This 207-nucleotide RNA was probed chemically with 2A3 and DMS. The RNA was probed in 150 mM KOAc, 10 mM MgCl2 and 150 mM bicine (pH 8.5) at 24 C. Source: RMDB library M2RFPK, as collected in RNAgym. For 2A3, 5,244 sequencing reads were counted.

[RMDB]
RNA sequence: GGGAACGACUCGAGUAGAGUCGAAAAACUCCUAUUCCAACACGUCCUCGUCGUACAGAGUGGUAACAUGUGUCACCACAUAUCCAAGGUUGGGUACACGGGCUUGACCCAACCCCUUGGGCGGAUGAAAACCAGAUUACGUUCGCGUAAUCUGGAAGCUCUAACAUAUCUUCGGAUAUGUUAGAGCAAAAGAAACAACAACAACAAC
Reactivity to 2A3 in 0.01 (KOAc 150mM, MgCl2 10mM, bicine 150mM(pH8.5), 24C), signal-to-noise 6, nucleotides 027 to 156: a000c080u050c020c010u050a100u090u080c030c020a070a030c040a020c100g030u020c010c010u050c030g130u050c020g020u140a060c070a070g120a040g070u020g010g000u070a080a040c060a180u200g110u090g070u190c030a020c020c010a030c030a050u120a050u080c060c030a050a010g010g000u010u020g030g010g000u090a080c070a030c120g170g060g020c090u060u140g050a040c000c000c000a000a000c000c020c000c000u010u010g010g000g000c030g060g020a060u120g070a030a050a020a050c000c000a000g000a000u000u000a000c010g020u020u020c180g010c010g110u000a000a000u000c000u000g000g000a000a000
Reactivity to DMS in 0.01 (KOAc 150mM, MgCl2 10mM, bicine 150mM(pH8.5), 24C), signal-to-noise 1, nucleotides 027 to 156: a090c040u000c050c030u000a100u030u000c060c020a090a100c050a110c010g010u020c010c000u010c040g000u000c090g000u000a150c060a120g020a180g030u010g010g000u000a010a040c040a150u000g020u000g030u000c010a030c000c000a010c020a060u000a050u000c040c020a050a080g030g000u010u000g000g000g000u010a060c030a140c060g000g030g050c050u000u000g000a150c010c000c000a000a040c030c010c000c010u000u000g000g020g030c090g000g000a180u000g010a090a070a110a200c000c010a010g000a030u010u000a000c000g000u000u010c300g030c000g020u000a000a020u000c010u000g010g010a010a050